The record gives the reactivity of an RNA of 177 nucleotides to DMS. In probing experiments dimethyl sulfate is read out at A N1 and C N3, which are open when not base-paired. Conditions: 150 mM KOAc, 10 mM MgCl2 and 150 mM bicine (pH 8.5), 24 C. DMS adducts were read by reverse transcription with MarathonRT.
[RMDB]
RNA sequence: GGGAACGACUCGAGUAGAGUCGAAAAGAUAUGGACGGAAUGGAGGAUGACAAAAUACUCGGAAACGAGUAUGAACCGUUCAUCCUAUGAAGUUCCGUCCUAAGUCAAACAUCCCUUCGGGGAUGAAGAGAUCUCUACGGUUCGCCGUAGAGAUCUCAAAAGAAACAACAACAACAAC
Reactivity to DMS in 0.01 (KOAc 150mM, MgCl2 10mM, bicine 150mM(pH8.5), 24C), signal-to-noise 1, nucleotides 027 to 126: g000a000u000a300u020g000g000a000c000g000g000a000a020u000g000g000a000g000g010a040u000g000a100c040a040a070a080a000u000a000c010u000c000g040g010a080a050a160c000g010a070g040u000a000u000g000a060a070c250c270g010u010u000c000a000u000c000c010u010a190u040g000a040a180g000u000u000c000c000g010u000c000c000u010a000a040g000u000c020a180a120a220c010a000u000c000c000c010u000u010c120g070g010g000g000a010u000g010a050a120